[RMDB]
RNA sequence: GGGAACGACUCGAGUAGAGUCGAAAAAGUUAGAGAUUAAUGCCACGAUUUAUUUAUCCGAAUUAAUAGUAGGAAAAAUUACUCUGAAUUAACAGAGUACUCAAGAGCCUUGAGCCAGAGUGGAAAACCUCCCGUAGAAUUUCGAUUCUACGGGAGGAAAAGAAACAACAACAACAAC
Reactivity to DMS in 0.01 (KOAc 150mM, MgCl2 10mM, bicine 150mM(pH8.5), 24C), signal-to-noise 1, nucleotides 027 to 126: a080g040u000u030a100g000a260g000a160u040u020a070a140u000g070c010c000a000c030g000a050u020u000u010a020u030u000u000a180u000c000c000g000a090a300u000u060a000a120u050a050g000u000a180g000g000a030a030a020a030a000u000u000a000c000u020c000u000g000a030a100u000u010a220a140c000a080g000a000g000u020a000c030u010c000a080a030g000a280g000c200c140u020u000g000a020g020c300c150a030g000a260g000u000g000g000a220a040a040a040
Reactivity to 2A3 in 0.01 (KOAc 150mM, MgCl2 10mM, bicine 150mM(pH8.5), 24C), signal-to-noise 1, nucleotides 027 to 126: a000g190u180u130a040g050a120g000a240u130u190a140a090u180g080c000c000a010c050g080a030u030u220u120a030u080u040u030a070u090c030c000g000a080a000u080u040a200a210u200a170g050u000a030g070g000a010a010a010a010a010u070u010a000c000u010c000u020g080a100a120u080u010a080a000c000a000g000a000g000u000a000c040u000c010a000a130g040a070g190c040c000u100u070g010a000g000c100c000a000g070a090g050u000g000g000a000a080a000a000
Chemical mapping of a 177-nucleotide RNA with DMS and 2A3. The reactions ran in a buffer of 150 mM KOAc, 10 mM MgCl2 and 150 mM bicine (pH 8.5), at 24 C. The 2A3 profile rests on 361 reads.